An RNA of 177 nucleotides, treated with DMS and 2A3 and read out base by base. For 2A3 the reverse transcriptase was SuperScript II with manganese. The reactions ran in a buffer of 150 mM KOAc, 10 mM MgCl2 and 150 mM bicine (pH 8.5), at 24 C. For 2A3, 3,995 sequencing reads were counted. Reactivities are given for positions 27 through 126. Source: RMDB library RFMREP, as collected in RNAgym. DMS adducts were read by reverse transcription with MarathonRT.
RNA sequence: GGGAACGACUCGAGUAGAGUCGAAAACGGGAAACCGAACGCAAGUAACUUAGUUACUUAUUUAACUUCCUGUAUAUUUUUAAACCUAAUUUUGGGUUCGUAAUGCACCGCUCUUUGUGAGCGGUGUUCACAUACCUUAGUUCGCUAAGGUAUGUGAAAAAGAAACAACAACAACAAC
Reactivity to DMS in 0.01 (KOAc 150mM, MgCl2 10mM, bicine 150mM(pH8.5), 24C), signal-to-noise 4, nucleotides 027 to 126: c030g010g000g010a030a060a110c140c090g000a050a060c250g020c150a020a000g000u000a010a000c010u020u010a160g000u000u000a010c000u000u000a110u010u000u000a130a130c100u000u000c000c000u000g000u000a120u000a020u000u020u020u030u020a050a070a090c000c000u040a050a180u010u010u010u000g010g000g010u000u000c120g010u000a060a070u020g000c010a000c000c000g010c000u000c000u010u010u000g010u000g000a000g020c000g000g000u000g000u000
Reactivity to 2A3 in 0.01 (KOAc 150mM, MgCl2 10mM, bicine 150mM(pH8.5), 24C), signal-to-noise 5, nucleotides 027 to 126: c010g010g000g000a020a010a020c020c030g020a070a000c080g020c120a030a010g000u020a020a010c110u190u190a060g060u010u000a020c010u020u020a070u100u090u040a050a040c010u020u030c010c010u010g040u040a190u010a070u200u160u020u050u190a080a070a050c000c000u040a140a270u080u150u160u190g040g000g000u010u040c050g030u080a120a090u240g010c010a000c010c000g010c010u010c010u080u260u300g200u070g050a000g000c010g000g000u000g010u000